Chemical mapping of a 177-nucleotide RNA with 2A3 and DMS. The RNA was probed in 150 mM KOAc, 10 mM MgCl2 and 150 mM bicine (pH 8.5) at 24 C. For 2A3 the reverse transcriptase was SuperScript II with manganese.
RNA sequence: GGGAACGACUCGAGUAGAGUCGAAAAGGGUGAUCGUUCGCGAUCACCCAAAGAAGCACGAUACGCCAAGAAAUCCCGGAACAUUGGUAUGGAAGCCUGAGAAAACUGACAAGUUCGCUUGUCAGAAGUAUGUCUCUAUCUUCGGAUAGAGACAUACAAAAGAAACAACAACAACAAC
Reactivity to 2A3 in 0.01 (KOAc 150mM, MgCl2 10mM, bicine 150mM(pH8.5), 24C), signal-to-noise 3, nucleotides 027 to 126: g000g000g000u010g010a010u000c010g030u080u080c210g000c010g080a000u020c000a000c000c000c000a000a000a000g010a020a000g040c040a000c030g060a050u120a150c050g010c020c020a040a010g060a050a110a030u050c000c020c000g020g010a080a030c040a100u080u080g050g020u080a050u100g020g070a090a050g010c000c010u080g000a050g060a060a090a040a060c000u000g000a000c000a020a010g010u040u060c220g050c080u010u000g000u000c000a000g000a010a000
Reactivity to DMS in 0.01 (KOAc 150mM, MgCl2 10mM, bicine 150mM(pH8.5), 24C), signal-to-noise 3, nucleotides 027 to 126: g000g010g020u000g010a020u000c000g040u000u010c250g030c010g000a000u000c000a000c000c000c000a000a010a050g000a120a060g000c080a080c100g010a120u010a050c090g010c040c020a080a070g000a070a080a110u000c020c010c020g010g000a070a080c090a090u000u000g010g010u010a110u010g010g000a080a050g010c040c020u010g000a100g000a100a100a130a120c000u000g000a000c010a020a010g010u000u010c230g020c010u000u010g010u000c010a010g000a050a050